[RMDB]
RNA sequence: GGGAACGACUCGAGUAGAGUCGAAAAUCCGGUGCACGGGGUAAGCCUGUGUACCAUAAGGGAGACAACCCAGCGCCGGGUUAAGGUCCCAAAGUGUGGAUUAAGUGCGAUCGAAGGUGGUCCCGAGAUACGAUAAAGAUUUCGAUCUUUAUCGUAUAAAAGAAACAACAACAACAAC
Reactivity to DMS in 0.01 (KOAc 150mM, MgCl2 10mM, bicine 150mM(pH8.5), 24C), signal-to-noise 9, nucleotides 027 to 126: u010c010c010g010g020u000g010c000a030c060g010g000g000g010u030a110a160g010c000c000u000g010u010g010u000a030c050c050a050u020a070a140g010g000g010a080g010a120c080a070a080c000c010c000a120g010c050g010c040c030g000g010g010u000u010a080a100g000g000u000c010c010c010a070a090a090g020u000g010u020g000g000a070u000u010a070a100g010u020g010c060g010a070u010c060g010a100a080g000g020u000g010g000u000c010c010c010g000a110g000
Reactivity to 2A3 in 0.01 (KOAc 150mM, MgCl2 10mM, bicine 150mM(pH8.5), 24C), signal-to-noise 9, nucleotides 027 to 126: u000c000c010g010g000u010g000c030a030c090g020g000g010g070u230a100a060g300c000c010u020g010u010g030u030a020c000c000a020u110a040a070g040g020g010a080g010a040c050a050a030c040c000c000a020g030c030g010c050c040g020g000g000u030u030a050a030g040g030u030c000c000c000a020a070a020g100u120g030u090g020g020a050u080u080a110a040g030u050g100c030g020a030u040c040g030a100a020g040g030u060g010g010u020c000c000c000g010a020g010